Source: RMDB library OK2TRN, as collected in RNAgym. Chemical mapping of a 177-nucleotide RNA with DMS and 2A3. The reactions ran in a buffer of 150 mM KOAc, 10 mM MgCl2 and 150 mM bicine (pH 8.5), at 24 C.
[RMDB]
RNA sequence: GGGAACGACUCGAGUAGAGUCGAAAAGCGCAAGUUUCUGGAGGAGCGAGGCGUUGCGCACUACUGGGACCUUGCAGAGGCCACUGUGCAGUGAUUUUUCCAGUCCGAUUGCUUCACUCAUCUAGGAUGGUGAACAUGAAUUCGUUCAUGUUCACCAAAAAGAAACAACAACAACAAC
Reactivity to DMS in 0.01 (KOAc 150mM, MgCl2 10mM, bicine 150mM(pH8.5), 24C), signal-to-noise 4, nucleotides 027 to 126: g020c070g010c080a070a070g010u000u000u010c010u010g000g000a120g000g010a050g020c050g010a030g000g030c040g010u010u000g010c080g020c160a120c070u000a080c060u000g000g000g020a030c200c020u010u010g010c060a060g000a070g000g010c130c220a070c040u000g020u010g000c040a050g040u010g010a150u000u000u000u000u000c020c030a080g000u010c030c040g010a080u010u010g010c010u000u000c010a060c000u010c030a060u000c050u000a070g000g010a140
Reactivity to 2A3 in 0.01 (KOAc 150mM, MgCl2 10mM, bicine 150mM(pH8.5), 24C), signal-to-noise 2, nucleotides 027 to 126: g040c070g000c070a020a080g040u030u040u040c040u030g080g030a060g010g010a020g010c030g010a000g010g000c010g040u040u060g020c050g000c040a090c110u090a040c000u030g010g030g060a040c010c030u010u070g000c030a060g040a060g150g090c120c040a100c070u130g010u040g030c000a040g040u020g190a170u130u050u050u100u110c020c000a010g030u000c030c010g060a090u040u250g000c000u020u010c020a040c020u020c000a050u000c060u040a010g090g050a080